[RMDB]
RNA sequence: GGGAACGACUCGAGUAGAGUCGAAAAGAAGGAGAUGAAAGCGACUUUAGAAUCGGCUAACUGAGCAGACAGAUGCAGACGGCAAGUAUCGUCGCCAGAGAUACAGUCGCAAAUAGCCGUAGGAGAACAUUAGGCGGCAGUUCGCUGCCGCCUAAUGAAAAGAAACAACAACAACAAC
Reactivity to 2A3 in 0.01 (KOAc 150mM, MgCl2 10mM, bicine 150mM(pH8.5), 24C), signal-to-noise 2, nucleotides 027 to 126: g080a000a000g080g050a130g000a010u080g050a070a070a040g000c010g000a000c000u080u130u070a030g120a160a060u110c040g020g040c040u000a090a180c050u060g030a000g040c020a050g000a070c010a030g000a020u000g040c000a000g000a090c050g090g030c070a150a080g030u090a030u010c000g010u020c000g000c000c000a010g000a000g000a000u040a040c070a020g000u000c000g000c000a030a030a030u060a010g000c000c040g000u000a000g000g240a100g020a070a010
Reactivity to DMS in 0.01 (KOAc 150mM, MgCl2 10mM, bicine 150mM(pH8.5), 24C), signal-to-noise 1, nucleotides 027 to 126: g010a130a000g020g030a080g000a020u000g020a010a090a180g000c030g000a140c030u010u020u000a020g030a180a130u020c020g020g000c070u000a180a230c020u010g000a110g010c010a050g000a050c010a150g020a040u000g060c050a090g000a040c060g100g060c080a000a040g010u000a000u000c000g000u000c020g000c010c040a050g030a110g000a150u050a030c060a080g010u020c010g000c010a080a000a050u010a080g000c020c010g030u040a050g020g000a060g000a110a220
This 177-nucleotide RNA was probed chemically with 2A3 and DMS.
For DMS, 1,523 sequencing reads were counted.
The data come from the RNA Mapping Database (RMDB), library OK1LIB.
Conditions: 150 mM KOAc, 10 mM MgCl2 and 150 mM bicine (pH 8.5), 24 C.